[RMDB]
RNA sequence: GGGAACGACUCGAGUAGAGUCGAAAAACGUCAUCCGGGGGUGGGGAGAAGGACAAGCUGAAACAAACAAGAAGCAGGGCGAAGAAUAUGUCUAUGGAUGUGUGCAAUAACUCUGCAGUUGCACAACAUCAUAAUAGCAUUUCGAUGCUAUUAUGAUAAAAGAAACAACAACAACAAC
Reactivity to DMS in 0.01 (KOAc 150mM, MgCl2 10mM, bicine 150mM(pH8.5), 24C), signal-to-noise 9, nucleotides 027 to 126: a090c120g010u020c060a060u030c060c040g010g010g000g010g030u020g000g000g000g000a060g010a090a070g000g010a050c100a080a100g010c050u010g000a090a090a090c180a080a080a090c190a070a080g000a080a080g020c030a050g010g000g000c040g000a070a080g010a050a070u020a060u010g000u010c050u010a090u020g020g000a080u010g010u000g010u000g000c000a010a010u010a050a100c060u010c040u000g010c040a140g010u000u000g000c030a010c030a030a070c140
Reactivity to 2A3 in 0.01 (KOAc 150mM, MgCl2 10mM, bicine 150mM(pH8.5), 24C), signal-to-noise 9, nucleotides 027 to 126: a000c030g050u030c010a080u040c030c020g030g000g010g000g020u090g010g000g020g010a050g030a040a040g040g030a020c030a040a030g040c020u060g090a050a060a040c070a040a100a010c040a050a070g100a050a010g040c020a010g000g030g000c040g040a090a020g050a060a040u210a090u160g080u030c070u080a100u110g070g010a060u060g050u010g000u000g030c000a010a020u040a100a090c030u020c030u080g000c030a030g000u010u010g010c000a010c010a030a060c020